[RMDB]
RNA sequence: GGGAACGACUCGAGUAGAGUCGAAAAUAUUACCACAAAUGGCUCGUGGGCCAUUUUUAAUGACCACCAUCUUAAUAGACCUGGUGUCUAUUGUGGCUCUGAUUUUAUUGACAUUGUCAGGCGGUUAACACAUCGGGGGAUUCGUCCCCCGAUGUGUAAAAGAAACAACAACAACAAC
Reactivity to DMS in 0.01 (KOAc 150mM, MgCl2 10mM, bicine 150mM(pH8.5), 24C), signal-to-noise 1, nucleotides 027 to 126: u000a100u000u000a210c010c000a190c230a020a030a000u000g010g020c010u000c150g030u100g030g000g080c000c000a000u000u010u020u020u120a040a090u010g000a010c010c020a140c010c100a050u030c100u050u050a020a090u010a000g000a050c010c000u070g000g000u020g000u000c000u000a030u020u010g020u000g000g010c150u000c000u000g000a130u000u000u020u010a110u010u040g000a110c110a150u000u010g000u010c000a030g000g000c160g000g020u020u000a080
Reactivity to 2A3 in 0.01 (KOAc 150mM, MgCl2 10mM, bicine 150mM(pH8.5), 24C), signal-to-noise 3, nucleotides 027 to 126: u140a020u130u160a080c010c040a060c000a020a070a000u010g000g010c010u040c150g150u200g110g000g000c030c030a020u000u000u050u020u110a080a110u110g020a000c000c000a000c020c010a140u000c070u130u190a100a070u110a090g020a060c020c020u170g230g000u130g030u100c000u000a060u060u030g040u000g040g000c030u000c000u090g020a040u100u130u090u070a200u010u210g050a060c100a150u190u090g000u030c000a020g040g060c030g040g000u020u170a130